About this RNA:
Chemical mapping of a 207-nucleotide RNA with DMS and 2A3. It was measured as part of the RMDB library OK3TST. 2A3 adducts were read by reverse transcription with SuperScript II with manganese.

RNA sequence: GGGAACGACUCGAGUAGAGUCGAAAAUAGCUGAUGAACGCUCUAACGAGAUUAUCCGUAAGCUGACCCCUGAGCAACGUCGAGAAGCUCUCAACAACGGGACCCUUCUGUAUCAGGAUGACCCAUACGCUAUGGAAGCACUCCGAGUCAAGACUGGUGACUAUUAGAACUUCGGUUCUAAUAGUCAAAAAGAAACAACAACAACAAC
Reactivity to DMS in 0.01 (KOAc 150mM, MgCl2 10mM, bicine 150mM(pH8.5), 24C), signal-to-noise 2, nucleotides 027 to 156: u010a090g010c050u010g010a130u000g010a070a100c040g010c000u000c050u000a140a160c150g000a100g020a170u000u000a120u020c020c060g000u010a090a050g000c030u010g000a130c060c000c030c000u000g020a110g040c020a130a060c060g010u020c040g020a190g010a110a290g010c050u010c020u000c040a000a070c040a060a060c050g020g020g020a080c030c030c020u000u010c030u010g010u000a080u000c050a100g040g010a170u000g000a140c020c000c040a130u000a210c100g030c060u030a050u000g010g030a130a070g000c030a100c060u000c040c010g030a090g020u000c040a090a100g000a160c030u000g000g010
Reactivity to 2A3 in 0.01 (KOAc 150mM, MgCl2 10mM, bicine 150mM(pH8.5), 24C), signal-to-noise 3, nucleotides 027 to 156: u150a010g010c030u050g000a070u060g010a090a050c060g040c030u010c040u100a100a060c060g000a030g030a130u050u120a050u170c030c030g020u050a040a060g010c020u030g050a060c000c000c000c020u030g010a000g030c040a080a060c060g090u080c020g100a050g010a230a010g010c020u000c000u010c060a040a300c040a100a010c080g000g020g010a020c000c030c000u000u010c030u040g120u040a110u090c040a030g000g070a070u030g080a080c010c000c060a060u080a070c050g000c040u020a010u100g030g010a090a040g000c010a010c060u000c020c020g000a020g060u040c010a040a150g040a120c080u180g120g020